[RMDB]
RNA sequence: GGGAACGACUCGAGUAGAGUCGAAAAGCUGACCGUUUCGACGGUCAGCAAAAAGAUAUGGAGUUCCUUGGACAUGCUCCCAGAUCGGAAACGAUCUGUGAGAGCAACAGCCAGCGGAACUCCUAAGUCAAAAAACCGUAAUAUUCGUAUUACGGAACAAGAUUCAACUAUUCGUAGUUGAAUCUUGAAAAGAAACAACAACAACAAC
Reactivity to DMS in 0.01 (KOAc 150mM, MgCl2 10mM, bicine 150mM(pH8.5), 24C), signal-to-noise 2, nucleotides 027 to 156: g020c010u000g020a020c010c000g030u000u010u000c290g020a140c000g030g020u000c000a020g010c000a000a030a040a120a080g010a040u000a090u000g000g000a010g020u010u000c000c000u010u010g000g020a060c030a230u000g010c010u000c000c000c000a010g020a010u000c010g020g010a100a030a130c000g020a010u000c000u000g000u010g020a200g020a010g030c010a050a060c100a100g000c000c010a040g030c130g010g000a020a020c010u000c000c000u010a000a070g010u000c000a000a090a080a110a160a100c000c030g030u000a000a010u000a070u000u000c230g060u000a030u010u000a010c000g000g010a070a110
Reactivity to 2A3 in 0.01 (KOAc 150mM, MgCl2 10mM, bicine 150mM(pH8.5), 24C), signal-to-noise 4, nucleotides 027 to 156: g010c000u000g000a000c010c000g030u040u090u150c220g110a030c000g000g010u010c010a010g000c000a000a000a000a010a000g000a010u010a010u020g010g000a000g000u010u000c010c020u010u000g030g000a070c140a270u300g000c000u000c010c000c000a000g010a010u000c000g000g010a010a000a000c000g000a000u000c000u010g000u140g010a290g000a000g050c000a020a020c020a020g010c000c010a030g030c100g040g000a000a000c000u000c000c000u000a000a000g000u000c010a000a010a010a050a100a200c030c010g000u000a010a000u030a030u050u100c200g010u040a010u000u020a010c000g010g010a020a040
An RNA of 207 nucleotides, treated with DMS and 2A3 and read out base by base. Values are in units of 0.01, from 0 to 300, in steps of 10. DMS adducts were read by reverse transcription with MarathonRT. The 2A3 profile rests on 5,677 reads. Reactivities are given for positions 27 through 156.